[RMDB]
RNA sequence: GGGAACGACUCGAGUAGAGUCGAAAAGGGAAGGAUGGUAAUAUUUUCGCACCGUCUAAAGGUAAGCAGUAUGAAGUCGGCGUGAAAUAUGUACCGGAAGAUCGUCCGAUUGUAGUUACUGGUGCCGUCCGUGGUAUCACUUCGGUGAUACCACGGAAAAAGAAACAACAACAACAAC
Reactivity to 2A3 in 0.01 (KOAc 150mM, MgCl2 10mM, bicine 150mM(pH8.5), 24C), signal-to-noise 1, nucleotides 027 to 126: g000g050g030a110a040g090g000a010u070g010g040u000a090a000u040a100u100u110u030u030c100g000c050a010c010c000g050u030c050u120a030a100a080g040g030u020a060a060g120c000a000g070u070a050u150g030a060a040g010u010c010g030g000c030g000u010g070a000a100a000u150a100u200g070u040a030c010c070g000g010a050a000g040a020u020c010g140u000c010c010g000a010u040u130g150u050a080g030u110u060a010c050u050g030g000u070g000c000c010g000
Reactivity to DMS in 0.01 (KOAc 150mM, MgCl2 10mM, bicine 150mM(pH8.5), 24C), signal-to-noise 1, nucleotides 027 to 126: g060g000g010a060a160g010g000a080u010g000g020u000a050a050u000a100u000u000u010u000c110g000c060a050c000c030g010u000c050u000a050a150a080g040g010u000a060a070g020c060a100g030u000a030u000g000a150a040g000u010c000g000g000c020g000u000g000a060a080a030u000a050u000g000u010a060c080c050g020g020a140a020g030a140u000c030g010u010c000c000g000a070u000u000g000u000a140g000u000u000a050c030u000g000g000u000g000c010c000g000